[RMDB]
RNA sequence: GGGAACGACUCGAGUAGAGUCGAAAAGAAAUGUCCACAGCCGUUUUGACCGAAUUUUUUUCGGACGGGCCAAAUGCGAGUCGGCGGCUGGAGAUGCUGUUAGGCCCGUUUAAGCAUCGGACUAGAAGGGCGGGUCGGUGUUCGCAUUGAUUCGCCCAAAAGAAACAACAACAACAAC
Reactivity to 2A3 in 0.01 (KOAc 150mM, MgCl2 10mM, bicine 150mM(pH8.5), 24C), signal-to-noise 9, nucleotides 027 to 126: g090a000a090a030u150g000u000c010c000a020c000a010g000c000c000g020u040u070u140u270g050a020c020c010g050a040a050u130u090u020u010u010u090u170c050g030g010a010c010g020g000g000c010c010a080a150a030u250g080c060g030a040g050u020c010g010g000c000g000g000c000u000g010g030a180g000a010u020g000c010u030g050u200u110a050g010g000c000c000c000g000u000u010u020a040a000g000c000a000u000c020g010g000a010c020u030a020g070a190a120
Reactivity to DMS in 0.01 (KOAc 150mM, MgCl2 10mM, bicine 150mM(pH8.5), 24C), signal-to-noise 6, nucleotides 027 to 126: g010a080a100a070u020g010u000c000c010a190c000a010g010c010c000g020u000u010u020u010g020a090c000c020g010a040a010u000u010u050u020u020u010u020c070g010g000a040c010g010g000g000c000c010a050a050a060u020g020c090g000a060g000u000c010g010g000c010g000g000c000u010g000g000a090g020a010u000g000c000u000g000u010u020a110g000g000c000c000c000g020u010u010u010a110a060g010c020a010u000c020g000g000a010c010u010a110g000a140a110